This 177-nucleotide RNA was probed chemically with 2A3 and DMS. The data come from the RNA Mapping Database (RMDB), library OK2TRN. The 2A3 profile rests on 1,197 reads. 2A3 adducts were read by reverse transcription with SuperScript II with manganese. Conditions: 150 mM KOAc, 10 mM MgCl2 and 150 mM bicine (pH 8.5), 24 C.
[RMDB]
RNA sequence: GGGAACGACUCGAGUAGAGUCGAAAAGUGGCGCGUAGGUCUCCAUGGGGAGGGCGACUAGCCACCUUGGGGGGCCGAGCUUGACGACAUCGCGGUAGUCGCUAGUCUGGAGCUCCGUAAUCUCGUCACAGUCACCGAAGUUCGCUUCGGUGACUGUAAAAGAAACAACAACAACAAC
Reactivity to 2A3 in 0.01 (KOAc 150mM, MgCl2 10mM, bicine 150mM(pH8.5), 24C), signal-to-noise 1, nucleotides 027 to 126: g040u040g040g000c000g040c050g080u050a040g000g100u030c010u000c030c020a140u150g020g000g060g050a200g080g070g020c010g020a140c100u090a040g020c000c000a020c000c000u080u070g010g000g000g000g000g000c020c040g000a010g000c000u010u010g000a030c010g000a020c010a040u080c050g000c020g060g050u140a050g120u230c010g000c020u020a040g110u030c050u150g080g010a000g000c000u020c020c000g000u040a040a060u020c040u030c020g090u070c040
Reactivity to DMS in 0.01 (KOAc 150mM, MgCl2 10mM, bicine 150mM(pH8.5), 24C), signal-to-noise 2, nucleotides 027 to 126: g000u000g000g010c070g020c150g020u010a120g040g000u000c000u000c000c000a160u000g000g000g020g030a170g000g020g020c010g020a110c170u020a300g020c030c000a020c010c010u010u020g020g010g010g010g010g000c020c020g010a040g010c030u000u000g000a110c160g000a010c060a050u000c130g000c020g020g020u010a070g020u010c030g000c030u000a080g000u010c030u010g000g000a140g020c010u000c010c090g010u000a040a080u000c010u000c020g000u000c070